This 177-nucleotide RNA was probed chemically with DMS and 2A3. Conditions: 150 mM KOAc, 10 mM MgCl2 and 150 mM bicine (pH 8.5), 24 C.
RNA sequence: GGGAACGACUCGAGUAGAGUCGAAAAGCGCCAUGUGAAAAUGUCGGAAAGCUAGGCUGGAGAGCAAAAAUUCGACCCAAACAGUUUUAGCUGUGGAAAUGUUUGUAGAGGUACAGGCUGUCGAAGACCUAUGGUAGUAGUUCGCUACUACCAUAGGAAAAGAAACAACAACAACAAC
Reactivity to DMS in 0.01 (KOAc 150mM, MgCl2 10mM, bicine 150mM(pH8.5), 24C), signal-to-noise 9, nucleotides 027 to 126: g000c060g020c020c010a050u010g010u020g010a080a060a100a060u020g010u010c040g000g000a060a070a070g000c030u000a050g010g020c020u000g000g000a100g010a090g020c100a020a050a060a080a130u010u000c030g000a070c020c070c030a070a090a050c020a010g010u000u020u020u020a070g010c010u000g010u010g000g000a050a060a060u010g010u000u000u000g000u000a040g000a110g010g010u000a040c050a040g000g010c020u000g010u000c030g000a060a060g000a160
Reactivity to 2A3 in 0.01 (KOAc 150mM, MgCl2 10mM, bicine 150mM(pH8.5), 24C), signal-to-noise 9, nucleotides 027 to 126: g040c030g010c010c020a060u070g050u010g100a130a050a040a060u090g030u050c030g020g020a120a040a020g030c040u050a040g070g000c020u030g040g030a060g010a020g060c060a040a060a030a030a070u040u020c020g020a040c000c000c010a040a140a030c010a010g020u050u110u170u300a020g020c020u020g000u030g030g020a050a090a070u110g030u020u040u020g030u020a070g030a060g110g050u020a010c000a010g020g000c020u030g010u020c010g010a020a010g040a040
The data come from the RNA Mapping Database (RMDB), libraries RFM100 and RFMREP.
Reactivities are given for positions 27 through 126.